[RMDB]
RNA sequence: GGGAACGACUCGAGUAGAGUCGAAAACUAAUAUUCAGUUGCUGAUUGGCUUGAUCGAAAUUGAAGAGCAUUUCAGGUCGGGAACUGAAAUCAAUACACCGAUCUAUCUGUGGCAAGGACUGACGGAUAAAUAGGCCUGAUUCGUCAGGCCUAUUUAAAAAGAAACAACAACAACAAC
Reactivity to 2A3 in 0.01 (KOAc 150mM, MgCl2 10mM, bicine 150mM(pH8.5), 24C), signal-to-noise 3, nucleotides 027 to 126: c010u040a070a110u110a160u200u030c020a010g030u020u050g150c010u010g000a100u090u040g060g020c020u060u070g040a100u130c050g070a080a170a270u120u170g060a140a080g010a010g070c040a030u020u090u170c070a040g000g070u020c040g010g020g000a010a020c010u010g010a050a040a010u100c040a060a010u030a100c070a040c040c000g060a120u000c030u060a020u000c030u050g020u070g120g000c050a030a060g010g000a030c000u010g010a010c030g030g030a050
Reactivity to DMS in 0.01 (KOAc 150mM, MgCl2 10mM, bicine 150mM(pH8.5), 24C), signal-to-noise 3, nucleotides 027 to 126: c050u000a110a090u000a160u000u000c030a020g010u000u000g000c020u000g010a060u000u000g010g000c070u000u000g000a080u010c030g000a060a060a110u010u010g000a120a230g000a070g010c080a080u000u000u010c120a080g000g000u000c030g020g000g000a070a110c030u000g000a010a050a070u010c140a050a070u010a080c220a090c090c030g000a050u000c030u000a070u000c030u000g010u000g020g020c090a100a100g000g000a040c050u000g020a030c070g000g000a160

Overview: An RNA of 177 nucleotides, treated with 2A3 and DMS and read out base by base. It was measured as part of the RMDB library OK2TST.